[RMDB]
This 177-nucleotide RNA was probed chemically with DMS. Conditions: 150 mM KOAc, 10 mM MgCl2 and 150 mM bicine (pH 8.5), 24 C. The data come from the RNA Mapping Database (RMDB), library TTRDEL.
RNA sequence: GGGAACGACUCGAGUAGAGUCGAAAAGAUAUGGAUUAAGGGAGCUCUCAACUCGGAAACGAGUUACGCGAGAGCGAAGAACUUACGGUCCUAAGUCAAAACAGAUGUGCCUUCGGGCACAUCUGAACCCGUAGAAAGUGUUCGCACUUUCUACGGGAAAAGAAACAACAACAACAAC
Reactivity to DMS in 0.01 (KOAc 150mM, MgCl2 10mM, bicine 150mM(pH8.5), 24C), signal-to-noise 1, nucleotides 027 to 126: g000a050u000a140u010g000g000a000u010u000a190a030g020g000g000a030g040c000u010c000u000c070a050a010c030u000c010g060g000a050a000a130c000g010a010g000u000u000a090c300g000c220g010a020g000a050g010c000g010a020a150g000a070a110c010u000u000a020c300g010g000u000c010c000u000a000a100g010u000c010a110a070a130a150c000a000g000a040u000g000u000g010c000c000u000u020c300g030g000g000c040a000c000a000u000c000u000g000a060a120